This 177-nucleotide RNA was probed chemically with DMS and 2A3. Values cover nucleotides 27 to 126. DMS (dimethyl sulfate) methylates the pairing face of unpaired adenines and cytosines. The DMS profile rests on 1,004 reads. The RNA was probed in 150 mM KOAc, 10 mM MgCl2 and 150 mM bicine (pH 8.5) at 24 C. It was measured as part of the RMDB library OK2TST.
RNA sequence: GGGAACGACUCGAGUAGAGUCGAAAAGGCCUGUUGCGUGCGCCUAAUUCCGACAUGACUUGCAUAGCCGUCACAAGAUCGGGAUAAGCACCGGACGCAACCGCACCUAACAUGGCCGAGCCGAGCAUAGUGCCUCAUCAUUCGUGAUGAGGCACUAAAAAGAAACAACAACAACAAC
Reactivity to DMS in 0.01 (KOAc 150mM, MgCl2 10mM, bicine 150mM(pH8.5), 24C), signal-to-noise 2, nucleotides 027 to 126: g020g000c120c000u000g020u000u000g030c100g010u000g000c000g010c250c020u000a060a040u000u000c010c000g030a020c080a260u000g000a030c010u010u030g050c060a200u000a090g040c050c300g000u000c000a090c240a110a180g000a110u000c000g000g000g000a030u000a040a020g020c040a090c210c020g010g000a030c020g000c000a030a020c110c110g020c060a080c000c020u000a060a120c100a080u000g000g010c000c000g000a030g080c090c030g050a190g000c130a170
Reactivity to 2A3 in 0.01 (KOAc 150mM, MgCl2 10mM, bicine 150mM(pH8.5), 24C), signal-to-noise 1, nucleotides 027 to 126: g020g000c010c010u020g000u000u010g000c010g000u030g070c010g000c030c000u020a030a030u030u000c000c010g000a000c020a050u020g000a000c020u060u020g020c060a160u140a180g120c130c060g020u030c010a000c090a190a090g040a230u010c000g000g000g010a100u010a050a060g010c050a040c030c090g070g020a000c000g000c000a030a010c000c010g100c010a060c000c000u040a120a030c080a110u150g010g000c010c010g040a020g010c000c070g060a070g010c010a110